Chemical mapping of a 177-nucleotide RNA with 2A3 and DMS. Reactivities are given for positions 27 through 126. 2A3 adducts were read by reverse transcription with SuperScript II with manganese. The DMS profile rests on 907 reads.
RNA sequence: GGGAACGACUCGAGUAGAGUCGAAAAGAUAUGGAGUGGAGCUUGGACCCACCGGGUCGGAAACGACCCGUGGCUAGCUCCCUCCUAAGUCAAAAGAGUAAGUGUGGGUUCGCCCACACUUACUCAAGUUUCUAGACUGGUUCGCCAGUCUAGAAACAAAAGAAACAACAACAACAAC
Reactivity to 2A3 in 0.01 (KOAc 150mM, MgCl2 10mM, bicine 150mM(pH8.5), 24C), signal-to-noise 1, nucleotides 027 to 126: g010a010u020a020u130g010g010a050g080u300g030g010a010g000c020u070u090g180g140a300c010c030c030a020c160c100g010g030g000u010c030g010g030a140a060a080c010g000a010c000c030c000g000u000g010g000c000u000a000g020c000u010c010c000c000u030c000c000u010a000a000g030u000c030a010a030a090a180g000a000g010u000a010a010g010u000g000u010g000g000g120u110u250c300g080c000c040c000a000c000a000c000u000u000a000c000u000c000a000a000
Reactivity to DMS in 0.01 (KOAc 150mM, MgCl2 10mM, bicine 150mM(pH8.5), 24C), signal-to-noise 1, nucleotides 027 to 126: g010a040u000a300u010g000g020a030g030u010g010g010a010g040c010u000u010g030g000a150c300c010c000a030c120c130g000g010g000u020c000g010g000a050a110a220c000g010a020c010c000c020g040u010g000g000c010u000a040g000c000u000c000c000c000u000c000c000u010a000a070g010u000c020a120a090a070a150g000a030g010u000a010a030g010u000g020u010g020g000g000u010u010c150g000c000c000c000a010c000a000c000u000u000a000c000u000c000a020a080